An RNA of 207 nucleotides, treated with 2A3 and read out base by base. The 2A3 profile rests on 407 reads. The RNA was probed in 150 mM KOAc, 10 mM MgCl2 and 150 mM bicine (pH 8.5) at 24 C.
RNA sequence: GGGAACGACUCGAGUAGAGUCGAAAAACAAUGGCUGACGAUCCGAUCGAGCGCAUCGGUGUGGAGCUGGAGAUCUUCGCGAUCCCGCAGCCCGCCGGCGCCCCGCCGAUGACGGAGACGUACAUGCACGUACGCCGACGGCAGAACGGUGCCGCCGAUCAUAAGGCCUCUUCGGAGGCCUUAUGAUAAAAGAAACAACAACAACAAC
Reactivity to 2A3 in 0.01 (KOAc 150mM, MgCl2 10mM, bicine 150mM(pH8.5), 24C), signal-to-noise 1, nucleotides 027 to 156: a000c060a000a260u080g040g000c010u000g000a100c060g030a080u050c000c030g030a050u030c010g080a030g070c020g000c000a000u090c090g000g060u110g090u300g030g000a110g050c020u160g010g010a220g000a100u010c100u040u080c220g130c280g000a000u000c060c000c000g100c020a040g140c000c000c000g040c010c040g000g000c020g020c000c010c000c000g000c000c000g030a040u120g100a040c020g010g040a000g050a060c000g020u020a000c050a020u170g100c090a030c100g030u060a020c000g030c020c000g080a050c000g000g030c060a040g060a160a010c060g060g010u010g010c000c020g060c000c000g020
Source: RMDB library OK3TST, as collected in RNAgym.